[RMDB]
RNA sequence: GGGAACGACUCGAGUAGAGUCGAAAACAGAAAAAUUGAAAGGUAAUUCUUUUCUUUAGGAUUAUUAUGGAAUUACACUUUUAUACUCACUAGGGAACUUAUUAUCUGUAUAUUCAAAUACAUGUUAGUGAUGGAUAGGGUUCGCCCUAUCCAUCACAAAAGAAACAACAACAACAAC
Reactivity to 2A3 in 0.01 (KOAc 150mM, MgCl2 10mM, bicine 150mM(pH8.5), 24C), signal-to-noise 2, nucleotides 027 to 126: c070a000g210a140a000a050a050a190u280u300g010a020a020a000g020g000u040a050a000u000u040c000u020u300u130u000c000u150u210u140a160g040g060a020u090u110a010u300u080a040u270g020g020a010a000u080u070a000c060a150c060u000u000u000u090a050u040a020c050u030c000a040c040u000a100g000g010g010a000a000c000u150u020a050u090u120a000u220c040u000g070u040a050u030a040u140u170c050a000a000a000u270a070c000a010u070g050u180u160a090